[RMDB]
RNA sequence: GGGAACGACUCGAGUAGAGUCGAAAAUGCGGGGGCGACGAACGAUACUGUCCAGCUCAUUAGCGCCGGAAAGAAGUUCUUUCAGCGAGACAAUUUUUUCCCUGACAGGUAUAAGGGAUUUUGCCCCAUCAGCUUAUCACUUCGGUGAUAAGCUGAUAAAAGAAACAACAACAACAAC
Reactivity to DMS in 0.01 (KOAc 150mM, MgCl2 10mM, bicine 150mM(pH8.5), 24C), signal-to-noise 2, nucleotides 027 to 126: u010g040c110g000g010g000g020g000c030g020a010c150g030a180a120c120g010a070u000a050c020u000g020u010c030c220a090g010c050u000c160a100u030u000a150g010c050g030c050c130g000g020a050a030a020g010a110a120g010u000u010c000u010u020u010c180a140g040c170g030a060g000a060c090a060a040u000u000u000u000u000u000c000c020c120u000g000a070c100a040g000g000u000a080u010a100a130g000g010g010a230u000u000u010u010g030c000c000c000c020